The record gives the reactivity of an RNA of 177 nucleotides to 2A3 and DMS.

RNA sequence: GGGAACGACUCGAGUAGAGUCGAAAAUUACCUCCCUUCGGGGAGGUAAACUGAACGCAGCAAGCGGCAGCGCGCUCGCUUGCGCACACACGCACAAUAAAAGCAGUAUGCACUUCGGUGCAUACAAUGUAGUGAAUGGAUUCGUCCAUUCACUACAAAAAGAAACAACAACAACAAC
Reactivity to 2A3 in 0.01 (KOAc 150mM, MgCl2 10mM, bicine 150mM(pH8.5), 24C), signal-to-noise 5, nucleotides 027 to 126: u030u000a000c000c000u020c020c000c000u010u030c230g030g000g000g000a000g010g010u000a010a000a000c010u010g070a060a010c080g000c050a090g000c000a030a010g000c010g060g000c020a070g240c080g020c030g010c150u050c030g010c000u010u010g000c000g010c000a010c000a000c000a000c040g110c020a050c050a140a190u150a160a120a020a020g010c050a030g000u010a000u010g000c000a000c010u020u060c210g070g000u000g000c000a000u010a000c000a000a010
Reactivity to DMS in 0.01 (KOAc 150mM, MgCl2 10mM, bicine 150mM(pH8.5), 24C), signal-to-noise 6, nucleotides 027 to 126: u000u000a000c010c000u000c000c000c000u000u020c220g040g020g010g010a010g010g000u000a000a000a050c070u000g010a120a110c160g010c040a100g020c010a010a020g020c010g010g020c040a120g010c210g030c190g000c030u010c030g010c010u000u000g020c020g030c030a100c150a070c090a070c100g000c090a060c130a070a070u010a040a070a090a090g010c150a160g000u000a000u000g000c010a010c000u000u010c180g030g010u000g000c000a010u000a000c010a060a070
Source: RMDB library M2PK50, as collected in RNAgym. The RNA was probed in 150 mM KOAc, 10 mM MgCl2 and 150 mM bicine (pH 8.5) at 24 C.